Overview
Chemical mapping of a 177-nucleotide RNA with 2A3 and DMS. Conditions: 150 mM KOAc, 10 mM MgCl2 and 150 mM bicine (pH 8.5), 24 C.
[RMDB]
RNA sequence: GGGAACGACUCGAGUAGAGUCGAAAAGAGAUGUAGUUCGCUACAUCUCAAACAUAAACAUGAGAAAAUGCAACGGAGGCACCGAAGCCAUAAAAGAAAAAAAAAGUACGUUGUUCGCAACGUACAACGUGUCAAUUGAGUUCGCUCAAUUGACACGAAAAGAAACAACAACAACAAC
Reactivity to 2A3 in 0.01 (KOAc 150mM, MgCl2 10mM, bicine 150mM(pH8.5), 24C), signal-to-noise 2, nucleotides 027 to 126: g000a000g000a000u000g000u000a000g000u040u040c200g020c110u010a000c010a000u020c010u010c000a000a000a000c020a030u230a030a160a000c050a050u120g020a030g070a110a070a030a060u110g000c030a030a010c040g010g020a040g060g050c030a010c060c060g060a020a000g040c020c010a030u150a020a140a020a000g200a040a050a010a030a010a000a000a000a000g020u010a000c010g010u020u010g020u050u060c200g040c050a000a000c000g030u000a000c010a000a020
Reactivity to DMS in 0.01 (KOAc 150mM, MgCl2 10mM, bicine 150mM(pH8.5), 24C), signal-to-noise 2, nucleotides 027 to 126: g010a000g010a000u000g010u010a010g030u000u000c230g020c000u000a010c000a010u000c000u010c000a030a080a070c140a080u010a110a080a110c090a060u010g000a190g050a070a030a060a040u030g000c100a070a110c050g020g010a070g000g010c060a010c050c050g030a030a200g020c020c020a100u000a060a040a050a060g040a020a010a000a010a030a030a090a140a040g000u000a020c010g000u000u000g010u000u020c200g020c000a000a000c000g000u000a000c000a080a050
Source: RMDB library M2PK50, as collected in RNAgym. For DMS, 1,006 sequencing reads were counted.